[RMDB]
RNA sequence: GGGAACGACUCGAGUAGAGUCGAAAAGGUCUUACGUCAGCCAUGAGAACAACGGUAACUCUCAUGGUUGUCACAGAGAUGUGACGACGCUGACCUUCUAAGUUACCGCUUGUUAGAAGGUAAGACAUCCGUACUACUGGUUCGCCAGUAGUACGGAAAAAGAAACAACAACAACAAC
Reactivity to DMS in 0.01 (KOAc 150mM, MgCl2 10mM, bicine 150mM(pH8.5), 24C), signal-to-noise 3, nucleotides 027 to 126: g020g020u000c010u000u000a020c010g020u000c070a170g020c030c050a090u000g010a140g000a030a070c080a060a070c020g020g010u000a010a020c030u000c040u000c030a020u000g000g020u000u000g020u010c010a010c030a010g010a210g000a240u000g000u000g000a030c020g000a030c020g010c110u010g000a030c130c040u010u010c130u000a110a040g000u000u000a000c000c000g000c190u000u000g010u000u000a090g000a130a060g010g010u000a010a050g010a050c050a120
Reactivity to 2A3 in 0.01 (KOAc 150mM, MgCl2 10mM, bicine 150mM(pH8.5), 24C), signal-to-noise 1, nucleotides 027 to 126: g080g000u000c020u020u020a030c020g050u000c020a040g010c030c050a100u030g010a030g030a020a010c050a050a010c070g000g030u080a040a020c010u020c000u000c060a060u070g000g000u010u050g000u000c000a000c010a010g030a000g010a050u010g020u020g000a020c030g010a000c020g010c180u060g040a040c020c000u120u050c080u090a060a010g030u000u010a020c000c000g030c130u060u030g010u030u010a090g030a180a030g080g070u040a020a010g010a020c030a080